[RMDB]
RNA sequence: GGGAACGACUCGAGUAGAGUCGAAAAGAUAUGGACACAGGACAUGCUAUAUCGUCGGAAACGACGAUUUAGCAACAGCCUGGUCCUAAGUCAAAGCUAGCAAGGCAGUUCGCUGCCUUGCUAGCAAGAACUUAAGAGACUUCGGUCUCUUAAGUUCAAAAGAAACAACAACAACAAC
Reactivity to 2A3 in 0.01 (KOAc 150mM, MgCl2 10mM, bicine 150mM(pH8.5), 24C), signal-to-noise 2, nucleotides 027 to 126: g030a020u070a030u100g010g010a030c050a000c010a300g000g060a030c040a140u070g000c000u010a020u020a010u040c010g030u000c010g000g040a080a070a050c000g000a000c000g000a000u010u000u000a000g000c000a000a010c020a010g060c010c000u010g000g010u030c010c000u000a140a020g000u010c030a070a010a050g020c020u020a000g000c020a030a000g050g010c000a030g000u060u120c290g060c230u000g000c000c000u000u000g000c000u000a010g000c020a000a010
Reactivity to DMS in 0.01 (KOAc 150mM, MgCl2 10mM, bicine 150mM(pH8.5), 24C), signal-to-noise 2, nucleotides 027 to 126: g000a040u000a300u010g000g020a010c000a050c010a000g020g000a060c110a220u000g010c000u000a000u000a000u000c000g040u000c000g000g000a090a090a170c000g000a030c010g000a010u010u000u000a000g020c000a010a050c180a110g000c000c010u000g010g000u010c000c000u010a020a060g020u010c020a090a110a120g010c000u000a000g030c010a010a010g000g040c000a000g010u000u010c270g010c000u010g020c000c000u010u000g010c010u000a000g010c000a010a020